This 177-nucleotide RNA was probed chemically with 2A3 and DMS. For 2A3 the reverse transcriptase was SuperScript II with manganese. For 2A3, 3,374 sequencing reads were counted. Conditions: 150 mM KOAc, 10 mM MgCl2 and 150 mM bicine (pH 8.5), 24 C. Values cover nucleotides 27 to 126.
RNA sequence: GGGAACGACUCGAGUAGAGUCGAAAACAACUGUUAUCUUGCCACUGCAUUGUUAACACUCCAACAAAUAGAGUUGAAGUUUAAUCCACCUACUCUACAAAGGGCUGGUGAAGCUGCUAACUUUUGUACAUAAGAUCUUGUUCGCAAGAUCUUAUGUAAAAGAAACAACAACAACAAC
Reactivity to 2A3 in 0.01 (KOAc 150mM, MgCl2 10mM, bicine 150mM(pH8.5), 24C), signal-to-noise 3, nucleotides 027 to 126: c010a020a030c050u050g020u110u070a080u100c030u020u080g010c020c020a140c100u100g000c020a020u040u080g040u080u030a010a010c000a020c050u000c020c000a040a010c030a070a170a080u190a030g060a020g030u000u060g040a050a020g010u000u090u130a050a030u060c010c000a000c020c000u030a040c010u000c020u040a040c040a050a170a040g000g040g000c030u010g030g010u030g010a020a010g000c020u050g020c020u030a030a050c020u090u080u040u150g070u010
Reactivity to DMS in 0.01 (KOAc 150mM, MgCl2 10mM, bicine 150mM(pH8.5), 24C), signal-to-noise 4, nucleotides 027 to 126: c050a080a100c130u010g020u000u000a040u000c040u000u000g010c050c110a070c120u000g000c050a050u000u000g030u000u000a040a050c110a070c030u010c010c010a040a060c060a060a130a150u000a090g010a070g020u000u000g010a040a040g010u010u000u000a060a090u010c080c040a040c020c010u000a120c030u000c030u000a090c290a060a120a070g000g010g000c060u000g000g010u000g000a050a070g010c050u000g000c090u000a050a060c030u000u000u000u010g010u010

The DMS profile rests on 3,859 reads.